[RMDB]
RNA sequence: GGGAACGACUCGAGUAGAGUCGAAAAUGGGUGUUCGCACCCAGCUUAGCGUACUACCUGACAUGCAAUCGGAAGGGAGUCCCUUCCCAAAUAGGAAGGGACUUUGAUCUUCCUACUUGCAACAGCAGGUAUCGCCGAUCUUCCCCUUCGGGGGAAACGAUUUAUCAAAAUUCGUUUUGAUAAAUCGAAAAGAAACAACAACAACAAC
Reactivity to DMS in 0.01 (KOAc 150mM, MgCl2 10mM, bicine 150mM(pH8.5), 24C), signal-to-noise 3, nucleotides 027 to 156: u000g000g010g020u000g000u000u010c280g030c000a040c020c000c000a030g020c150u000u000a040g020c000g020u010a080c140u000a020c010c010u000g010a100c060a300u000g000c010a010a050u000c300g020g030a070a030g020g010g010a070g000u000c010c000c000u000u030c000c000c000a050a140a160u000a040g020g030a040a000g010g020g010a020c000u010u000u010g000a160u010c000u010u010c000c010u000a040c140u020u000g020c000a050a110c120a210g020c000a040g000g010u000a020u010c000g000c020c020g000a100u010c060u000u000c000c000c000c010u000u010c260g060g040g010g010g000a000a020a110
Reactivity to 2A3 in 0.01 (KOAc 150mM, MgCl2 10mM, bicine 150mM(pH8.5), 24C), signal-to-noise 5, nucleotides 027 to 156: u050g010g000g020u030g050u060u120c250g030c090a000c000c010c000a010g000c060u090u200a010g000c000g050u050a140c030u020a010c010c000u050g080a140c020a080u040g000c000a000a000u050c020g000g020a000a000g020g000g010a010g000u000c000c000c000u020u000c070c020c030a240a300a200u300a090g000g000a000a000g000g000g000a000c000u010u010u010g000a000u000c000u000u010c000c000u010a020c070u000u020g000c000a040a060c030a110g050c000a000g000g070u040a060u220c010g000c010c000g080a060u040c070u040u010c020c000c000c000u050u200c260g050g000g000g000g000a010a010a020
Structure probing data (DMS and 2A3) for a 207-nucleotide construct. DMS adducts were read by reverse transcription with MarathonRT. For 2A3 the reverse transcriptase was SuperScript II with manganese.